[RMDB]
This 177-nucleotide RNA was probed chemically with DMS and 2A3. For DMS, 518 sequencing reads were counted. Conditions: 150 mM KOAc, 10 mM MgCl2 and 150 mM bicine (pH 8.5), 24 C. It was measured as part of the RMDB library OK2TRN. The 2A3 profile rests on 806 reads. 2A3 is a SHAPE reagent: it acylates the 2'-hydroxyl of flexible nucleotides of all four kinds.

RNA sequence: GGGAACGACUCGAGUAGAGUCGAAAAGUGCUUGUAGUGUGCUGUUGACGGCAGUUCCUUCUACAACUCACUUCCUAAGCCAAUUCUGGACUUUGGUCAGGAAUCUGAGCAUCAUUCAGGUAACUGCUACUGUGCAGACCUUCGGGUCUGCACAGUAAAAAGAAACAACAACAACAAC
Reactivity to DMS in 0.01 (KOAc 150mM, MgCl2 10mM, bicine 150mM(pH8.5), 24C), signal-to-noise 1, nucleotides 027 to 126: g000u000g000c300u010u000g000u000a040g080u010g070u000g000c010u000g020u000u010g000a300c270g000g010c020a010g000u010u000c300c180u000u010c020u000a100c060a020a050c080u000c000a010c120u000u010c010c000u000a060a060g030c040c040a050a010u000u000c030u000g010g000a170c120u000u000u000g010g000u030c070a030g000g010a070a040u000c020u000g030a010g040c130a040u010c280a050u000u010c070a000g020g000u000a040a130c010u000g000c010
Reactivity to 2A3 in 0.01 (KOAc 150mM, MgCl2 10mM, bicine 150mM(pH8.5), 24C), signal-to-noise 1, nucleotides 027 to 126: g000u000g000c000u030u000g000u000a060g010u040g000u010g000c000u020g040u100u070g130a040c020g110g070c020a000g000u080u000c020c000u070u100c010u010a030c000a020a030c050u040c040a000c010u070u000c010c010u030a060a020g100c010c010a030a120u180u000c030u100g280g080a300c040u090u050u040g090g040u110c030a010g060g010a010a030u070c030u000g010a030g070c030a110u140c060a050u000u230c020a030g110g000u030a030a040c000u010g000c040